[RMDB]
RNA sequence: GGGAACGACUCGAGUAGAGUCGAAAAACGUUAAACAGUUUAAAUUAACUGCAAACGAAAACUCAUACGCUGUAGCUGCUUAGUUCAGCCCAGCUGCCAAUAGACUGCCUGCCCGUGGCGGUCUUGCGGUAUCAACAUUACGGGAUACGCUUGCCUACACAAGCAUAAUGUUCGCAUUAUGCUUGUGAAAAGAAACAACAACAACAAC
Reactivity to 2A3 in 0.01 (KOAc 150mM, MgCl2 10mM, bicine 150mM(pH8.5), 24C), signal-to-noise 6, nucleotides 027 to 156: a000c040g000u040u000a140a200a030c020a020g020u040u050u110a220a300a240u200u140a030a020c010u010g020c060a050a030a020c010g050a060a040a070a060c060u080c040a060u120a150c080g000c010u010g020u060a060g020c000u010g020c040u180u170a050g030u200u150c000a000g000c010c030c000a000g000c010u030g010c000c000a010a000u010a000g000a000c010u010g010c010c000u050g020c000c000c000g000u010g000g000c000g000g000u000c000u000u000g000c000g000g040u030a060u080c020a000a140c010a050u040u150a020c000g030g000g010a030u050a130c100g020c110u080u110g050c000c010u080a040
Reactivity to DMS in 0.01 (KOAc 150mM, MgCl2 10mM, bicine 150mM(pH8.5), 24C), signal-to-noise 2, nucleotides 027 to 156: a130c030g020u000u010a040a160a080c010a000g000u000u000u000a120a080a210u000u010a000a020c000u000g010c000a240a070a060c010g010a100a080a100a110c030u000c060a180u000a140c070g040c000u000g020u000a040g030c020u000g000c030u000u020a080g030u010u000c020a040g000c000c070c010a030g020c010u010g010c000c040a040a300u010a000g040a050c000u000g010c030c000u010g020c080c040c030g040u000g010g010c000g070g040u020c020u000u010g030c300g000g010u010a020u010c060a080a140c100a080u000u000a030c000g000g010g010a050u000a040c060g010c070u000u000g010c030c030u010a250
About this RNA:
An RNA of 207 nucleotides, treated with 2A3 and DMS and read out base by base. The data come from the RNA Mapping Database (RMDB), library ARCHII. In probing experiments dimethyl sulfate is read out at A N1 and C N3, which are open when not base-paired. 2A3 adducts were read by reverse transcription with SuperScript II with manganese. For DMS, 2,973 sequencing reads were counted. DMS adducts were read by reverse transcription with MarathonRT. The 2A3 profile rests on 4,249 reads. The RNA was probed in 150 mM KOAc, 10 mM MgCl2 and 150 mM bicine (pH 8.5) at 24 C.